[RMDB]
RNA sequence: GGGAACGACUCGAGUAGAGUCGAAAACACCAGAUGUCCUAAAUGCGCCAUUCCGGUCAUCAUCGGUUUUGGACGAGGAACAAUGGGCGGCGUGGGAUAUUUCAGCCGAAUAAACAAGCGUGCCACCAGCAUGACCGCCUUUCGAGGCGGUCAUGCUAAAAGAAACAACAACAACAAC
Reactivity to 2A3 in 0.01 (KOAc 150mM, MgCl2 10mM, bicine 150mM(pH8.5), 24C), signal-to-noise 1, nucleotides 027 to 126: c100a000c000c000a000g040a090u140g030u000c000c000u000a040a100a070u220g000c200g000c070c000a000u000u000c000c000g000g020u090c130a160u170c000a000u000c100g050g030u000u050u080u300g040g000a040c070g070a050g000g040a000a160c000a060a020u100g180g000g000c070g000g160c050g010u120g000g130g000a140u130a130u130u120u140c030a030g010c000c000g000a000a160u130a040a140a170c040a050a050g030c000g000u070g000c000c000a040c000c050

Notes: Conditions: 150 mM KOAc, 10 mM MgCl2 and 150 mM bicine (pH 8.5), 24 C. The record gives the reactivity of an RNA of 177 nucleotides to 2A3. The data come from the RNA Mapping Database (RMDB), library OK1LIB.